[RMDB]
RNA sequence: GGGAACGACUCGAGUAGAGUCGAAAAUGAGACAAACACGCUUCACAAUGUGCGGCAAAGAAACAUUGUUUAUGCAAAGGCACUUCGCAAUGUGUGCUCAAACAUUGCUUCUUCAAACACGCUUCACAAAAGAAUCAGUGGUUCGCCACUGAUUCAACGACGAUAAACGCUUCGGCGUUUAUCGUCGAAAAGAAACAACAACAACAAC
Reactivity to 2A3 in 0.01 (KOAc 150mM, MgCl2 10mM, bicine 150mM(pH8.5), 24C), signal-to-noise 2, nucleotides 027 to 156: u170g010a030g030a060c050a030a140a000c070a030c050g000c000u020u020c000a000c050a000a000u000g000u000g040c030g070g050c040a050a130a050g080a000a090a000c010a000u000u020g090u040u060u080a100u150g130c050a040a000a090g090g020c010a000c040u030u020c040g040c050a020a000u040g000u000g020u010g040c030u050c130a060a050a000c000a000u000u000g000c000u070u030c040u040u080c040a080a140a100c070a030c090g110c060u070u090c070a040c070a130a100a020a080g000a000a000u000c000a000g000u010g050g030u070u070c270g030c020c000a000c000u010g000a000u000u000c000a000a000
This 207-nucleotide RNA was probed chemically with 2A3. It was measured as part of the RMDB library M2RFPK. The RNA was probed in 150 mM KOAc, 10 mM MgCl2 and 150 mM bicine (pH 8.5) at 24 C. Reactivities are given for positions 27 through 156.